[RMDB]
RNA sequence: GGGAACGACUCGAGUAGAGUCGAAAAUGUGGAUUUCGAUCCACAAAAAAACCGUAGGACCAUACAAGGCUGAUGACCCUGGGUCGCUUUCGAAAGAGAAAAGUCCCAGGCAAGGCCGAUGGUCCUAAACGGAAAAACGGCUAUUUCGAUAGCCGAACUUUUCUUGCUAUUUCGAUAGCAAGAAAAGAAAAGAAACAACAACAACAAC
Reactivity to DMS in 0.01 (KOAc 150mM, MgCl2 10mM, bicine 150mM(pH8.5), 24C), signal-to-noise 2, nucleotides 027 to 156: u000g040u010g030g000a070u010u010u010c290g020a070u000c010c000a040c010a000a000a110a140a070a050a120c020c030g020u010a040g010g020a030c000c000a050u010a160c090a080a090g020g030c000u000g050a120u000g000a090c300c000c000u000g010g040g020u000c110g000c130u010u010u000c010g010a190a270a260g000a250g000a050a030a020a140g000u000c000c000c000a040g000g020c000a020a020g020g040c010c010g000a070u010g000g030u010c010c000u010a010a030a030c020g010g000a020a030a050a100a130c040g020g020c010u010a010u000u000u000c200g010a060u000a020g030c000c000g010a040a030
Reactivity to 2A3 in 0.01 (KOAc 150mM, MgCl2 10mM, bicine 150mM(pH8.5), 24C), signal-to-noise 2, nucleotides 027 to 156: u110g000u010g000g000a010u130u160u130c230g030a040u000c020c010a010c000a020a050a000a070a000a000a070c020c000g010u000a010g000g000a000c000c000a000u050a150c100a300a190g010g000c010u010g010a300u130g040a070c020c000c010u000g000g000g020u060c080g040c100u010u000u010c070g150a260a290a140g200a040g040a030a080a030a040g070u080c000c000c000a000g000g000c010a020a070g000g010c020c000g000a000u010g000g000u000c000c000u000a000a000a020c000g030g060a060a060a040a000a040c020g070g000c010u030a020u010u180u090c270g050a010u020a010g000c000c000g000a040a000